[RMDB]
RNA sequence: GGGAACGACUCGAGUAGAGUCGAAAAAGCGUUCGCCGAGGCGGAAGCGCAGCGAACGCCAUUCCGUCGAAAGCGAGGGAAUGAAGUCGCGGAAGAAGCGGAAACUGUCCGGCACGAUAUCGGCGAAGCUAUUACGGCGGUUCGCCGCCGUAAUAGCAAAAGAAACAACAACAACAAC
Reactivity to 2A3 in 0.01 (KOAc 150mM, MgCl2 10mM, bicine 150mM(pH8.5), 24C), signal-to-noise 3, nucleotides 027 to 126: a010g070c040g050u020u030c010g000c010c020g050a130g180g040c050g100g030a110a060g090c010g000c030a000g010c010g040a060a020c010g000c010c000a000u000u010c010c010g100u030c010g060a300a060a020g190c060g040a020g050g070g060a040a040u060g040a050a030g060u050c020g000c030g020g000a080a040g030a090a010g070c020g000g040a070a090a030c040u040g060u060c010c000g080g060c060a020c120g060a060u040a030u190c030g000g010c010g010a040a000
Reactivity to DMS in 0.01 (KOAc 150mM, MgCl2 10mM, bicine 150mM(pH8.5), 24C), signal-to-noise 3, nucleotides 027 to 126: a070g030c060g020u000u010c020g030c000c010g010a080g020g010c010g010g000a150a090g010c080g000c000a080g000c020g020a100a130c010g020c130c000a050u000u000c000c000g030u000c020g020a100a100a080g030c050g010a060g000g010g010a040a030u000g000a110a110g000u000c030g020c020g000g000a070a040g010a140a110g030c000g000g000a070a120a180c070u010g010u000c050c020g010g000c060a100c120g000a080u000a120u010c030g010g000c030g000a050a090
Overview
This 177-nucleotide RNA was probed chemically with 2A3 and DMS. For DMS the reverse transcriptase was MarathonRT. High DMS reactivity at an A or C suggests that its Watson-Crick edge is free. The RNA was probed in 150 mM KOAc, 10 mM MgCl2 and 150 mM bicine (pH 8.5) at 24 C.